This 207-nucleotide RNA was probed chemically with 2A3 and DMS. The DMS profile rests on 1,641 reads. 2A3 adducts were read by reverse transcription with SuperScript II with manganese.

RNA sequence: GGGAACGACUCGAGUAGAGUCGAAAAGUUUACGCUCCAAGAUCGGUAGAUAGCAGCCCUAUCAAUAUCUAGGAGAACUGUGCUAUGUUUAGAAGAUUAGGUAGUCUCUAAACAGAACAAUUUACCUCAUACGUUAGGACGUUCGCGUCCUAACGAAGAUCCACAUUAACUUCGGUUAAUGUGGAUCAAAAGAAACAACAACAACAAC
Reactivity to 2A3 in 0.01 (KOAc 150mM, MgCl2 10mM, bicine 150mM(pH8.5), 24C), signal-to-noise 5, nucleotides 027 to 156: g010u020u040u060a040c040g010c020u000c000c000a030a010g010a040u060c120g050g100u110a050g020a060u060a040g050c070a030g030c060c000c000u010a010u020c000a050a040u040a010u190c030u050a060g000g020a010g010a040a060c070u090g020u030g070c040u060a020u080g000u010u020u000a060g000a260a010g000a030u040u030a030g020g040u040a010g010u000c000u000c000u000a000a010a010c020a030g030a040a030c080a030a020u070u060u070a020c000c010u070c050a100u130a160c020g010u000u000a000g000g000a000c000g000u030u040c210g000c000g070u000c000c000u000a000a000c000g000a010a000
Reactivity to DMS in 0.01 (KOAc 150mM, MgCl2 10mM, bicine 150mM(pH8.5), 24C), signal-to-noise 1, nucleotides 027 to 156: g000u010u010u020a100c120g000c000u000c010c000a100a140g020a060u000c190g030g000u000a080g040a100u000a100g010c080a220g020c180c160c010u000a090u000c000a110a230u020a090u020c040u000a160g000g020a290g000a070a020c100u000g030u000g030c010u010a250u000g020u020u000u000a000g020a120a130g000a090u000u000a160g000g050u010a090g040u000c010u000c010u000a020a020a010c010a040g000a020a050c070a030a110u000u000u010a100c000c030u000c060a080u000a080c020g030u000u010a020g020g050a020c030g000u000u000c220g000c020g060u000c030c000u000a000a000c010g000a080a060

The RNA was probed in 150 mM KOAc, 10 mM MgCl2 and 150 mM bicine (pH 8.5) at 24 C. The 2A3 profile rests on 4,514 reads.